[RMDB]
RNA sequence: GGGAACGACUCGAGUAGAGUCGAAAAGCGGUGACGUUGAGGGCUAAUUUCUGACACUUCGAGAUAUGUUUUGUAGGAUUGUCGUCCUAUUUACGUGUUUAAGCCUGGGGAGAGGUGUAAUAGCGAGCCCCCUAGAAUAGUUCGCUAUUCUAGGGGGAAAAGAAACAACAACAACAAC
Reactivity to 2A3 in 0.01 (KOAc 150mM, MgCl2 10mM, bicine 150mM(pH8.5), 24C), signal-to-noise 2, nucleotides 027 to 126: g020c060g010g020u050g020a010c030g010u010u070g030a040g030g000g000c040u080a080a080u050u160u000c060u040g040a000c020a000c030u100u140c070g130a070g030a070u090a030u150g090u080u100u110u100g030u020a030g000g010a030u000u150g140u170c110g000u000c000c000u020a070u010u080u020a010c050g000u020g050u030u040u080a030a010g010c010c020u000g040g010g020g000a130g000a030g000g040u040g020u100a070a080u060a080g060c030g010a020g040
Reactivity to DMS in 0.01 (KOAc 150mM, MgCl2 10mM, bicine 150mM(pH8.5), 24C), signal-to-noise 3, nucleotides 027 to 126: g020c060g010g010u000g010a070c070g010u000u000g010a090g020g010g010c030u000a070a080u000u000u000c050u000g010a070c080a030c080u010u010c060g010a090g010a080u000a020u000g010u010u010u000u000g010u000a030g000g000a020u010u010g010u010c210g000u000c010c010u000a020u000u000u000a040c060g020u000g010u000u000u000a070a120g010c030c020u010g000g000g000g000a110g000a060g010g000u000g010u000a040a100u000a070g010c100g020a150g000

Structure probing data (2A3 and DMS) for a 177-nucleotide construct. Conditions: 150 mM KOAc, 10 mM MgCl2 and 150 mM bicine (pH 8.5), 24 C. The 2A3 profile rests on 1,626 reads. For DMS the reverse transcriptase was MarathonRT. For DMS, 3,626 sequencing reads were counted.